[RMDB]
RNA sequence: GGGAACGACUCGAGUAGAGUCGAAAAAGUCUAAAGAGGCGUGCUUUACCAAGUCAUGGUUUAGUGCGAAGCCCUCUUGACAAUGCAGUCCUUUACAGAAAUAUCCAAUGUAUAGGCUGUUAGGCUGAGCAUUCCCGUGGUUCGCCACGGGAAUGCUAAAAGAAACAACAACAACAAC
Reactivity to DMS in 0.01 (KOAc 150mM, MgCl2 10mM, bicine 150mM(pH8.5), 24C), signal-to-noise 1, nucleotides 027 to 126: a030g030u010c000u000a080a020a000g000a000g000g000c000g030u000g000c000u000u000u000a010c010c030a020a230g010u040c240a180u000g010g000u000u000u000a000g010u010g000c000g040a130a040g010c300c030c000u000c000u000u000g000a040c090a080a160u010g000c000a030g030u080c000c000u000u000u000a000c000a010g000a180a130a130u080a130u110c120c090a190a100u000g010u040a000u000a000g010g000c030u000g020u000u000a100g000g030c000u000g000
Reactivity to 2A3 in 0.01 (KOAc 150mM, MgCl2 10mM, bicine 150mM(pH8.5), 24C), signal-to-noise 1, nucleotides 027 to 126: a000g000u000c000u060a080a000a000g000a000g030g010c000g000u020g000c050u000u000u000a000c010c000a000a050g080u180c020a210u050g000g010u000u000u050a000g000u000g050c040g170a130a040g060c010c000c000u000c010u010u050g000a000c100a000a070u110g050c000a010g040u300c000c000u010u010u010a000c000a000g210a040a170a000u300a070u000c110c000a010a000u060g000u000a000u000a000g010g010c000u000g000u030u080a000g010g000c040u040g100